Structure probing data (2A3 and DMS) for a 177-nucleotide construct.
RNA sequence: GGGAACGACUCGAGUAGAGUCGAAAAUUUAGGUGCCUUUCGCCUGAAAACACACGUGUCCAUUCAACACUCCAGAGGAACCCGAGCGCUGGCCUUCCCUGGACUCCAGUGGUAACGCCUUGAGCUUAAUGUAUAGGUACUUCGGUACCUAUACAUUAAAAGAAACAACAACAACAAC
Reactivity to 2A3 in 0.01 (KOAc 150mM, MgCl2 10mM, bicine 150mM(pH8.5), 24C), signal-to-noise 8, nucleotides 027 to 126: u090u090u080a050g020g000u040g040c030c020u060u090u110c020g010c010c010u030g040a040a030a060a010c080a010c010a010c060g050u040g040u030c040c020a050u070u090c040a080a060c030a030c050u040c010c020a030g040a060g100g040a060a050c000c010c020g040a040g040c050g020c080u030g030g000c010c010u030u020c000c000c010u020g020g040a070c010u010c020c010a040g010u060g100g040u070a060a010c020g010c010c000u030u080g040a030g010c010u010u020
Reactivity to DMS in 0.01 (KOAc 150mM, MgCl2 10mM, bicine 150mM(pH8.5), 24C), signal-to-noise 5, nucleotides 027 to 126: u000u010u010a020g010g020u010g010c080c070u000u000u020c060g010c000c020u010g010a080a040a080a090c130a080c080a060c090g020u000g010u000c030c030a060u000u010c080a060a080c060a080c070u010c030c040a050g010a100g010g020a090a080c090c020c020g000a080g020c050g020c060u000g010g010c050c060u000u000c020c010c010u000g000g000a090c050u010c040c050a040g010u010g020g010u010a040a060c130g010c020c020u000u010g000a120g020c070u010u010
Conditions: 150 mM KOAc, 10 mM MgCl2 and 150 mM bicine (pH 8.5), 24 C.
It was measured as part of the RMDB libraries RFM100 and RFMREP.
2A3 adducts were read by reverse transcription with SuperScript II with manganese.
DMS adducts were read by reverse transcription with MarathonRT.